[RMDB]
RNA sequence: GGGAACGACUCGAGUAGAGUCGAAAAGUGAAAGCUCCUUCUCGCGCAAUGUGUAACUCAUGAUUCUCAUGACCCCUGGUUGGAGAGAUCCGGACUAGGAGCCAGGGGGCCUCUGAUUCUGCCAGCCAAAACUGUCGUAAGUUCGCUUACGACAGAAGAAGCUCAUUGAGUUCGCUCAAUGAGCUUCAAAAGAAACAACAACAACAAC
Reactivity to 2A3 in 0.01 (KOAc 150mM, MgCl2 10mM, bicine 150mM(pH8.5), 24C), signal-to-noise 1, nucleotides 027 to 156: g040u100g040a180a040a000g030c300u080c010c010u060u110c050u080c040g000c000g010c070a100a160u070g060u000g080u150a040a040c000u050c080a020u120g060a140u280u050c050u000c070a020u060g060a050c000c000c000c030u000g000g030u100u040g000g050a030g000a010g010a190u010c010c010g060g080a040c080u080a040g070g000a040g000c000c000a000g040g000g030g000g000c010c000u030c010u030g060a050u060u000c020u070g000c020c010a030g000c010c010a020a000a120a220c020u000g000u010c000g000u000a000a010g030u010u090c130g010c100u000u000a000c000g000a000c000a000g000a020a000